[RMDB]
RNA sequence: GGGAACGACUCGAGUAGAGUCGAAAAUGUGGAAGUCCUGCUCGGGGCGGAACCAUUAAAACCAUUCGAGCUAGUCAAUGCGUGGCGUGUCUCUCCGCAGCGUGUUGGCGAAUGUAAAGAGUGACUAUUGACCACGCAACGUUCGCGUUGCGUGGAAGUGAGGGUGUAUGUUCGCAUACACCCUCACAAAAGAAACAACAACAACAAC
Reactivity to 2A3 in 0.01 (KOAc 150mM, MgCl2 10mM, bicine 150mM(pH8.5), 24C), signal-to-noise 1, nucleotides 027 to 156: u220g020u090g090g050a140a100g050u000c000c030u050g000c010u000c000g040g000g000g000c020g010g000a000a020c000c010a000u110u150a040a030a000a070c050c000a000u050u100c050g020a000g050c000u020a020g010u000c010a000a020u000g010c000g030u090g200g000c000g000u030g000u000c010u000c000u000c010c000g000c000a070g010c000g000u010g000u000u000g000g000c020g000a000a020u050g050u100a010a060a000g020a000g020u010g010a000c030u040a160u070u190g120a070c010c000a000c010g000c000a000a010c000g010u060u070c180g000c000g080u000u000g000c020g000u000g000g000a000a000